This 177-nucleotide RNA was probed chemically with DMS and 2A3.
[RMDB]
RNA sequence: GGGAACGACUCGAGUAGAGUCGAAAAGCUCUGAGAGACAGAUCGAACAACAAAGAGAGAUCGAAAAUCUUAGGGGAGAGAACGAAUCUGUCGUCUUCUCUAGGACAUUGUCGAUCAGAUGUCCAAAGACCAUUCAUGGGUUCGCCUAUGGAUGGUCAAAAGAAACAACAACAACAAC
Reactivity to DMS in 0.01 (KOAc 150mM, MgCl2 10mM, bicine 150mM(pH8.5), 24C), signal-to-noise 3, nucleotides 027 to 126: g010c040u000c000u000g000a010g000a200g010a000c020a060g000a000u000c010g000a300a130c010a050a090c300a070a140a160g000a030g000a300g000a010u000c000g000a270a040a110a170u000c010u000u000a010g000g010g000g010a010g010a050g000a080a060c030g020a090a140u050c200u080g000u000c030g020u000c000u000u000c000u000c000u000a020g020g000a000c080a060u010u020g010u000c000g000a210u000c020a010g000a020u020g000u010c000c010a200a140a250
Reactivity to 2A3 in 0.01 (KOAc 150mM, MgCl2 10mM, bicine 150mM(pH8.5), 24C), signal-to-noise 4, nucleotides 027 to 126: g010c000u000c000u000g000a000g000a000g000a000c000a010g010a010u010c010g030a050a030c020a030a020c020a010a210a000g080a020g000a000g000a020u000c000g070a000a040a000a040u000c010u010u000a000g000g000g010g000a000g000a000g010a060a020c030g020a060a110u150c090u140g070u030c020g110u000c010u000u000c000u000c000u000a000g010g000a010c020a080u040u130g010u000c000g010a010u000c000a000g010a010u040g040u000c010c000a160a090a100